[RMDB]
RNA sequence: GGGAACGACUCGAGUAGAGUCGAAAACAGUAUCGCAGCAAGGGCAUUCUUUUGAAAAACUUAUCAAUUAGUGCAAUUUGCACUCUAACUUUACAAGCAUUUUAGUAGGAUGUGCUGAAGUGGGAACCAGAUAAGGUCUCUUCGGAGACCUUAUCUGAAAAGAAACAACAACAACAAC
Reactivity to DMS in 0.01 (KOAc 150mM, MgCl2 10mM, bicine 150mM(pH8.5), 24C), signal-to-noise 2, nucleotides 027 to 126: c080a100g000u000a090u010c060g010c060a040g050c090a070a060g000g010g030c010a030u000u000c030u000u000u010u000g010a020a070a060a210a120c050u010u000a060u000c080a070a080u000u010a040g010u010g030c020a120a200u020u000u000g020c000a020c030u000c210u010a040a030c030u000u000u000a060c040a030a080g010c060a080u000u000u010u010a110g020u000a060g010g000a020u000g020u000g020c050u020g030a060a140g020u000g030g020g030a110a150c210
Reactivity to 2A3 in 0.01 (KOAc 150mM, MgCl2 10mM, bicine 150mM(pH8.5), 24C), signal-to-noise 1, nucleotides 027 to 126: c020a010g050u120a040u200c020g030c030a030g000c020a030a090g000g040g020c000a000u060u070c020u020u040u060u110g080a080a050a020a020a000c030u100u070a090u070c020a100a100u060u030a050g000u020g000c030a040a270u250u110u180g040c010a000c040u070c020u010a090a110c000u020u080u120a060c040a060a030g000c020a050u070u050u070u040a020g000u000a020g000g070a030u060g030u060g040c060u050g050a050a040g010u010g000g100g000a010a060c050

This 177-nucleotide RNA was probed chemically with DMS and 2A3. For 2A3 the reverse transcriptase was SuperScript II with manganese. DMS adducts were read by reverse transcription with MarathonRT.